[RMDB]
RNA sequence: GGGAACGACUCGAGUAGAGUCGAAAAUAGAGAGACCUGCUAGAAUUGGGGACUUUCCUUGGACAAGGCAUUGAUGGUGAGAUGUAAAAGAUGAGAAGGAAUUAACUAUGCAAAGAGUUCUCAUAGGGGCAUUCCAGGCCAGAGGAAAAAAAUGUGCAAAUGAAGGUUAUUUCGAUAACCUUCAUUUAAAAGAAACAACAACAACAAC
Reactivity to DMS in 0.01 (KOAc 150mM, MgCl2 10mM, bicine 150mM(pH8.5), 24C), signal-to-noise 2, nucleotides 027 to 156: u000a160g010a120g000a140g000a140c060c020u010g020c040u000a120g020a090a100u000u000g010g020g040g020a070c030u000u000u020c050c020u010u000g000g020a090c080a070a090g010g020c040a030u000u000g040a070u000g030g040u000g000a060g000a070u020g020u010a040a070a080a160g010a080u000g000a100g050a060a080g000g000a060a120u000u000a080a120c060u000a090u000g010c070a050a060a120g010a190g010u010u010c010u010c020a110u000a100g010g040g010g020c090a060u000u000c000c030a080g020g030c020c040a080g010a110g020g020a010a000a030a130a060a060a140u010g010u000g040c070
Reactivity to 2A3 in 0.01 (KOAc 150mM, MgCl2 10mM, bicine 150mM(pH8.5), 24C), signal-to-noise 1, nucleotides 027 to 156: u130a010g050a000g020a000g020a070c010c020u030g050c050u080a040g070a140a140u100u060g000g000g010g010a020c020u060u060u060c000c000u020u050g040g000a010c010a080a060g050g000c010a020u000u090g070a030u030g010g010u030g030a110g000a040u040g010u050a090a100a070a020g060a100u100g030a000g000a030a060g030g000a000a010u040u020a050a050c070u030a090u130g010c030a010a090a110g070a060g020u080u000c020u000c030a000u030a030g060g000g030g000c010a010u100u000c010c010a000g030g030c000c030a050g010a030g020g000a050a000a000a000a030a000a150u170g010u070g050c010